[RMDB]
RNA sequence: GGGAACGACUCGAGUAGAGUCGAAAACUAUUUUUCAGAUUGAGCCAUAUACGUUGGUUUAGAUAAUCCGGUCGGGUACAGCUAAACCACCAGGUUCUACGUUGCACGCGAUUGGCGAUUGCUCCGCAUUACGCCGCGCAUUCGUGCGCGGCGUAAUAAAAGAAACAACAACAACAAC
Reactivity to 2A3 in 0.01 (KOAc 150mM, MgCl2 10mM, bicine 150mM(pH8.5), 24C), signal-to-noise 1, nucleotides 027 to 126: c100u270a220u000u240u000u080u260c020a300g050a170u070u070g020a000g000c000c050a050u200a070u000a200c080g100u220u250g000g020u130u000u000a000g000a020u140a160a070u030c000c000g000g300u170c300g170g050g000u150a000c000a070g050c080u080a010a030a030c000c000a000c000c000a000g100g060u000u000c000u000a110c170g100u100u220g010c120a000c070g000c030g170a270u070u000g000g120c000g100a080u000u220g000c070u070c060c000g110c000
Chemical mapping of a 177-nucleotide RNA with 2A3. The reactions ran in a buffer of 150 mM KOAc, 10 mM MgCl2 and 150 mM bicine (pH 8.5), at 24 C. The data come from the RNA Mapping Database (RMDB), library OK1LIB. For 2A3 the reverse transcriptase was SuperScript II with manganese.